Source: RMDB library OK2TST, as collected in RNAgym. Structure probing data (DMS and 2A3) for a 177-nucleotide construct. For DMS, 8,226 sequencing reads were counted. Conditions: 150 mM KOAc, 10 mM MgCl2 and 150 mM bicine (pH 8.5), 24 C. Values cover nucleotides 27 to 126.

[RMDB]
RNA sequence: GGGAACGACUCGAGUAGAGUCGAAAAUUCGGAGUCUUUCCUUAAGAGAGCAUUGAGGGGAUGAGCUAGUUUUGCGAAAUUGGGUAUGAAGCGUCUAUAGUAAUUGGCUAAACCUAGAAACGAUUGACUAUUCCUAAAUCUUCGGAUUUAGGAAUAGAAAAGAAACAACAACAACAAC
Reactivity to DMS in 0.01 (KOAc 150mM, MgCl2 10mM, bicine 150mM(pH8.5), 24C), signal-to-noise 6, nucleotides 027 to 126: u000u000c030g030g010a050g000u000c010u000u000u000c000c000u000u010a090a120g000a090g010a070g020c050a050u000u000g000a100g010g000g010g010a060u000g000a080g000c040u000a070g010u000u000u000u010g020c060g000a040a080a090u000u000g010g010g010u000a070u010g020a080a110g010c070g010u000c040u010a090u000a070g010u000a050a100u000u000g010g010c020u000a040a080a090c060c040u000a070g000a070a100a080c120g000a100u010u000g000a260
Reactivity to 2A3 in 0.01 (KOAc 150mM, MgCl2 10mM, bicine 150mM(pH8.5), 24C), signal-to-noise 3, nucleotides 027 to 126: u060u030c030g090g020a000g010u000c000u010u020u030c010c000u000u000a070a010g090a010g000a000g040c040a050u040u090g040a020g010g050g020g020a010u070g020a020g000c010u030a030g020u030u040u110u080g030c010g040a040a080a120u140u090g030g000g020u080a050u100g080a060a020g040c020g040u020c050u040a040u020a020g040u050a060a150u080u050g010g000c030u030a080a040a050c000c000u000a020g140a030a060a010c050g030a030u070u040g010a030